[RMDB]
RNA sequence: GGGAACGACUCGAGUAGAGUCGAAAACCAAAACUGUUGCUUAGGACAUACAAGAUCGUUCAAUGUCCAAGAAGAAACCUGAGCCGCUACAAUCAUCGGUCUAAUCUCUUUAGCAGAUGAAGUUAUUAGGGUUAACCUAAUUCGUUAGGUUAACCCUAAAAGAAACAACAACAACAAC
Reactivity to DMS in 0.01 (KOAc 150mM, MgCl2 10mM, bicine 150mM(pH8.5), 24C), signal-to-noise 2, nucleotides 027 to 126: c000c000a080a080a140a130c230u010g030u000u020g020c040u000u000a060g000g010a010c030a030u000a060c250a100a110g000a200u030c130g000u000u000c140a090a020u000g000u000c030c060a010a130g000a050a070g000a100a050a040c110c050u000g020a050g040c000c040g000c090u010a050c120a070a140u020c050a000u000c010g000g010u040c000u000a050a010u040c170u000c080u010u000u000a040g000c040a110g000a050u000g010a030a060g010u000u000a060u000u000
Reactivity to 2A3 in 0.01 (KOAc 150mM, MgCl2 10mM, bicine 150mM(pH8.5), 24C), signal-to-noise 4, nucleotides 027 to 126: c020c000a010a040a030a040c090u080g050u050u040g020c020u030u010a070g010g010a010c020a060u140a070c110a050a050g030a290u090c090g070u120u110c070a070a060u070g010u030c000c020a000a020g070a010a010g050a040a040a010c010c040u030g020a010g030c000c020g020c070u080a050c110a020a090u040c030a040u000c020g030g090u000c020u020a020a050u070c050u000c020u090u090u090a020g000c060a010g020a050u090g040a080a000g080u100u090a070u040u020